This 177-nucleotide RNA was probed chemically with 2A3 and DMS.
The RNA was probed in 150 mM KOAc, 10 mM MgCl2 and 150 mM bicine (pH 8.5) at 24 C.
It was measured as part of the RMDB library OK1LIB.

RNA sequence: GGGAACGACUCGAGUAGAGUCGAAAACAGGAAGAUACUGGGCAUUCUGGAGGCAUCUACCCCCUGGAGUGUCAUAUCAGCUUGCAUCCGUUGGCUCCACACCCCGACGGAGGAUGAUUGCGGCCUCUACCAGUUAUGAUUUCGAUCAUAACUGGUAAAAAGAAACAACAACAACAAC
Reactivity to 2A3 in 0.01 (KOAc 150mM, MgCl2 10mM, bicine 150mM(pH8.5), 24C), signal-to-noise 9, nucleotides 027 to 126: c020a010g110g060a070a090g010a050u070a100c080u180g050g000g000c000a010u020u010c000u020g040g030a130g040g000c040a120u040c090u180a140c010c000c000c000c010u020g010g010a020g010u030g010u020c010a010u030a030u050c010a010g050c030u080u190g010c030a070u010c000c010g020u020u050g030g010c030u050c090c010a080c010a030c020c010c000c010g010a020c030g030g010a030g030g030a060u110g030a050u030u160g030c050g030g010c010c000u040c020
Reactivity to DMS in 0.01 (KOAc 150mM, MgCl2 10mM, bicine 150mM(pH8.5), 24C), signal-to-noise 7, nucleotides 027 to 126: c030a050g010g000a060a040g000a020u000a030c270u030g010g000g010c010a020u000u000c020u010g010g010a070g000g000c200a080u050c180u060a140c190c020c010c020c010u000g000g000a020g020u000g000u000c010a040u010a020u010c020a050g000c040u000u020g010c090a120u010c010c020g010u000u000g010g010c040u000c050c050a090c100a090c060c100c020c010g010a060c070g010g000a030g000g020a070u020g010a120u010u010g010c070g000g000c020c010u000c100